The record gives the reactivity of an RNA of 177 nucleotides to DMS and 2A3. The DMS profile rests on 7,017 reads. The reactions ran in a buffer of 150 mM KOAc, 10 mM MgCl2 and 150 mM bicine (pH 8.5), at 24 C. For 2A3, 13,399 sequencing reads were counted. Reactivities are given for positions 27 through 126.

RNA sequence: GGGAACGACUCGAGUAGAGUCGAAAAGAUAUGGAACCCGGAGACAUGAUCAACGUCGGAAACGACGUAAUGAUCAACAGCUCCAGGGUUCCUAAGUCAAAAGGCUAAUGCGUUCGCGCAUUAGCCAGUUAAUGGUAAGCUUCGGCUUACCAUUAACAAAAGAAACAACAACAACAAC
Reactivity to DMS in 0.01 (KOAc 150mM, MgCl2 10mM, bicine 150mM(pH8.5), 24C), signal-to-noise 4, nucleotides 027 to 126: g000a010u000a040u010g000g010a010a000c000c000c000g010g000a030g020a020c070a190u010g020a000u000c010a080a060c000g020u000c000g010g000a010a010a030c000g010a000c010g000u010a070a050u000g000a030u000c000a170a070c230a160g000c000u000c000c010a150g030g020g010u000u000c000c000u000a000a060g010u000c000a090a120a130a120g000g000c000u000a000a010u000g010c000g040u010u010c280g020c000g010c010a010u000u000a000g010c000c000a000
Reactivity to 2A3 in 0.01 (KOAc 150mM, MgCl2 10mM, bicine 150mM(pH8.5), 24C), signal-to-noise 4, nucleotides 027 to 126: g000a000u010a000u050g000g000a000a000c000c020c010g040g010a010g010a010c210a300u300g000a000u020c000a010a010c000g000u010c000g030g000a010a010a010c010g010a000c000g000u020a100a190u060g000a000u000c010a020a050c140a060g010c000u000c000c020a020g020g000g000u010u000c000c000u000a000a000g000u000c010a010a030a100a170g000g000c000u000a010a000u010g030c000g060u050u130c300g000c010g000c200a000u010u010a000g010c010c000a000